[RMDB]
RNA sequence: GGGAACGACUCGAGUAGAGUCGAAAAAUGUCAUCUUUACUAAGAUUACUUACCCAUGUUUUCCAAUUCUGCUAGAAAACCAGUGGAUCAUUCUUUGAAGGGUAGACAGUGUACCUUAUAGGUUAGAGGAGGUACCACGAUUCGUCGUGGUACCUCCAAAAGAAACAACAACAACAAC
Reactivity to 2A3 in 0.01 (KOAc 150mM, MgCl2 10mM, bicine 150mM(pH8.5), 24C), signal-to-noise 1, nucleotides 027 to 126: a000u070g040u010c000a010u010c000u020u050u040a230c200u190a010a000g000a070u000u000a010c010u000u010a010c000c000c000a020u040g030u000u130u000u000c000c080a060a140u100u130c040u080g010c030u200a020g000a050a060a030a030c080c000a090g000u000g040g040a080u150c010a010u020u230c000u000u050u000g030a070a040g000g020g030u100a210g000a070c080a010g050u010g020u060a050c020c000u140u000a240u040a300g030g080u060u030a000g000a000